The record gives the reactivity of an RNA of 207 nucleotides to 2A3 and DMS. In probing experiments dimethyl sulfate is read out at A N1 and C N3, which are open when not base-paired. The 2A3 profile rests on 1,223 reads. The RNA was probed in 150 mM KOAc, 10 mM MgCl2 and 150 mM bicine (pH 8.5) at 24 C. DMS adducts were read by reverse transcription with MarathonRT.
[RMDB]
RNA sequence: GGGAACGACUCGAGUAGAGUCGAAAACUGUGCUAUACUAGUAAGGUUGAAUGAAUCAACCCUUGGUGCUUAGCUUCUUUCACCAAGCAUAUUACACGCGGAUAACCGCCAAAGGAGAAAAGAUGAACUGCCCGACGAUUCUUCGGAAUCGUCGGAACCCUUGGUUUAUGUUCGCAUAAACCAAGGGAAAAGAAACAACAACAACAAC
Reactivity to 2A3 in 0.01 (KOAc 150mM, MgCl2 10mM, bicine 150mM(pH8.5), 24C), signal-to-noise 3, nucleotides 027 to 156: c010u050g020u040g020c020u110a060u050a300c060u030a090g060u090a070a130g000g040u020u030g020a090a150u160g110a070a170u030c000a020a010c000c020c000u000u000g000g000u000g020c050u070u060a070g060c000u070u010c010u030u040u010c000a000c000c000a010a000g010c020a030u080a080u190u120a060c070a010c130g020c000g000g030a080u130a290a300c040c000g000c000c050a060a040a010g010g010a070g020a080a100a040a040g110a030u170g060a060a100c030u100g030c010c000c000g000a000c000g000a010u000u000c010u020u050c080g010g000a010a000u000c000g010u000c000g000g000a000a000
Reactivity to DMS in 0.01 (KOAc 150mM, MgCl2 10mM, bicine 150mM(pH8.5), 24C), signal-to-noise 1, nucleotides 027 to 156: c010u020g040u000g010c030u000a100u000a090c150u050a120g020u000a120a070g000g000u020u010g020a020a160u000g000a280a300u010c050a060a090c020c000c070u000u010g010g030u000g000c030u000u000a070g000c040u000u000c020u000u000u000c020a060c030c010a000a080g050c080a000u020a070u000u020a020c040a120c140g000c020g020g010a120u020a050a130c020c030g010c000c070a010a120a080g000g020a140g000a170a100a110a130g000a010u020g000a060a090c070u000g000c090c010c000g000a020c020g000a010u000u000c000u000u000c300g090g000a040a010u020c000g010u010c000g000g020a020a070